An RNA of 207 nucleotides, treated with DMS and 2A3 and read out base by base. The 2A3 profile rests on 9,045 reads.
[RMDB]
RNA sequence: GGGAACGACUCGAGUAGAGUCGAAAAAACGUUGCAUGAUCGUAAAACAUGCCCGGCUUACCGUGAGCCGCCUUUGAAAGAAAGGUUUACACGGAUUCUGUUGCGUUACGCACGUACCUAACUUGUGAAAACGGCAUCUUGUUCGCAAGAUGCCGAAGAACUAAUGUAACUUCGGUUACAUUAGUUCAAAAGAAACAACAACAACAAC
Reactivity to DMS in 0.01 (KOAc 150mM, MgCl2 10mM, bicine 150mM(pH8.5), 24C), signal-to-noise 2, nucleotides 027 to 156: a080a080c000g000u000u000g010c000a040u000g000a060u000c000g020u000a060a060a040a050c010a020u000g010c000c070c000g030g000c000u010u000a100c020c010g000u000g000a080g010c040c010g020c000c000u010u010u000g010a160a120a260g010a030a020a040g000g010u010u010u000a160c000a030c000g000g010a190u010u000c080u000g020u000u000g000c000g020u010u010a110c070g000c040a050c030g000u010a040c060c040u000a100a070c030u000u010g020u010g000a100a050a120a230c010g000g000c000a010u000c000u010u000g020u010u000c300g000c000a020a000g000a050u000g000c000c000g010a000a050
Reactivity to 2A3 in 0.01 (KOAc 150mM, MgCl2 10mM, bicine 150mM(pH8.5), 24C), signal-to-noise 7, nucleotides 027 to 156: a000a000c000g000u000u000g000c000a000u000g010a060u200c040g070u200a080a080a000a000c000a000u000g000c010c000c000g000g000c000u020u070a070c000c000g010u000g000a010g010c000c000g000c010c000u020u010u010g070a090a040a000g040a000a010a000g030g000u010u030u050a020c000a000c000g000g010a010u090u050c110u130g120u110u050g010c010g040u040u060a060c200g010c020a000c010g030u050a050c000c030u070a130a200c060u120u100g060u070g170a030a050a020a020c000g000g000c000a000u000c000u000u020g030u060u050c100g020c110a000a000g000a010u000g030c000c000g000a000a000